Chemical mapping of a 177-nucleotide RNA with 2A3 and DMS. The reactions ran in a buffer of 150 mM KOAc, 10 mM MgCl2 and 150 mM bicine (pH 8.5), at 24 C.
RNA sequence: GGGAACGACUCGAGUAGAGUCGAAAACUGUCGUUCUUCGGAACGACAGAAAGAACGCGUGGGUCACGCAAGGAGGAGCGUGUGGGUCGCGACAAACCCAAAAAAGCGUUCGGUUCGCCGAACGCAAGUAUCACUUUAUGUUCGCAUAAAGUGAUACAAAAGAAACAACAACAACAAC
Reactivity to 2A3 in 0.01 (KOAc 150mM, MgCl2 10mM, bicine 150mM(pH8.5), 24C), signal-to-noise 9, nucleotides 027 to 126: c000u000g000u000c000g010u010u000c000u030u030c180g090g000a010a000c000g000a000c000a000g000a000a010a000g030a060a020c050g020c010g030u050g020g070g210u070c020a000c030g010c040a040a040g100g060a050g030g030a080g040c030g010u020g010u040g020g040g090u040c010g010c000g020a020c040a020a070a070c000c000c000a070a090a010a010a020a020g000c000g000u010u000c010g000g010u040u030c200g020c020c000g000a000a000c000g000c000a000a010
Reactivity to DMS in 0.01 (KOAc 150mM, MgCl2 10mM, bicine 150mM(pH8.5), 24C), signal-to-noise 8, nucleotides 027 to 126: c000u000g010u000c000g010u000u000c000u000u010c200g030g010a010a010c000g000a010c000a000g010a020a060a090g010a110a090c100g010c020g020u000g000g000g010u000c020a030c030g010c030a080a070g010g010a230g010g010a090g000c040g020u000g010u000g000g000g000u000c020g020c020g000a070c100a050a080a110c000c000c010a000a040a070a070a100a100g000c000g010u000u000c000g010g010u010u010c200g020c000c000g010a010a000c000g010c010a000a020

For 2A3, 64,712 sequencing reads were counted.